[RMDB]
RNA sequence: GGGAACGACUCGAGUAGAGUCGAAAACACAGGGGACUGUGGGCGGAUCAUCAGGACGAGGCUUCCCCGGCUUCGACCUGGUCGUGCCUCGCGCACACAACCGGAGCCCACGGGCUCCGGCUUCCUCACAGGGUCAUAAUUUCGAUUAUGACCCUGUAAAAGAAACAACAACAACAAC
Reactivity to 2A3 in 0.01 (KOAc 150mM, MgCl2 10mM, bicine 150mM(pH8.5), 24C), signal-to-noise 4, nucleotides 027 to 126: c080a000c040a030g020g020g010g010a010c030u040g010u030g010g070g010c010g020g020a070u090c000a010u040c000a040g010g010a010c010g010a000g020g000c000u130u120c030c000c000c000g000g010c000u020u000c000g050a070c000c000u000g000g040u060c100g020u060g080c000c050u080c050g040c010g020c010a000c000a000c010a030a070c000c000g020g000a010g010c020c010c000a030c170g110g010g000c000u000c000c000g000g000c000u040u020c000c000u020c010
Reactivity to DMS in 0.01 (KOAc 150mM, MgCl2 10mM, bicine 150mM(pH8.5), 24C), signal-to-noise 2, nucleotides 027 to 126: c050a120c180a080g040g010g020g020a070c300u030g040u000g000g000g000c010g000g000a080u020c110a050u010c020a060g000g040a210c020g020a050g000g010c000u000u030c000c010c000c040g000g000c000u000u000c000g000a040c000c000u000g000g000u010c210g000u000g040c060c030u000c160g000c060g050c010a010c010a070c220a130a080c000c000g020g010a060g000c010c000c030a080c300g020g010g000c060u000c000c030g000g010c020u000u000c040c010u000c180
The record gives the reactivity of an RNA of 177 nucleotides to 2A3 and DMS. It was measured as part of the RMDB libraries RFM100 and RFMREP. Conditions: 150 mM KOAc, 10 mM MgCl2 and 150 mM bicine (pH 8.5), 24 C. DMS adducts were read by reverse transcription with MarathonRT. 2A3 adducts were read by reverse transcription with SuperScript II with manganese.